Annotation:
An RNA of 177 nucleotides, treated with DMS and 2A3 and read out base by base. The 2A3 profile rests on 20,928 reads. It was measured as part of the RMDB library M2PK50. The RNA was probed in 150 mM KOAc, 10 mM MgCl2 and 150 mM bicine (pH 8.5) at 24 C.
RNA sequence: GGGAACGACUCGAGUAGAGUCGAAAACGAUUAGCAUUCGUGCUAAUCGAAUCAGGUAGUACCUAUCUCUUUUACCUGUAGUGGCCAACGUCCGGACAGAGAAUCGAGUCCUGUUCGCAGGACUCAAAAGCUGAUAUUUAUUCGUAAAUAUCAGCUUAAAAGAAACAACAACAACAAC
Reactivity to DMS in 0.01 (KOAc 150mM, MgCl2 10mM, bicine 150mM(pH8.5), 24C), signal-to-noise 9, nucleotides 027 to 126: c010g010a010u000u000a000g010c000a040u000u010c210g020u000g020c000u000a000a000u000c000g010a070a070u000c080a030g010g010u000a040g020u000a250c050c050u000a130u000c050u000c020u000u000u000u000a030c020c010u000g010u000a060g020u010g010g010c030c050a060a090c210g000u000c020c020g010g010a060c100a070g000a080g000a070a100u010c120g000a020g000u000c000c000u000g010u000u010c170g020c010a020g000g010a020c000u000c000a010a030
Reactivity to 2A3 in 0.01 (KOAc 150mM, MgCl2 10mM, bicine 150mM(pH8.5), 24C), signal-to-noise 4, nucleotides 027 to 126: c010g000a000u000u000a000g000c010a000u020u050c200g100u070g000c000u000a010a000u010c000g010a000a090u070c010a000g040g010u040a020g020u050a080c010c020u070a100u120c030u000c000u020u090u050u060a050c000c000u020g010u050a070g070u060g080g020c040c050a090a040c080g050u010c020c030g040g030a040c040a030g070a010g030a090a090u210c110g000a010g000u000c010c010u010g010u010u020c120g010c040a000g000g000a000c000u010c000a010a010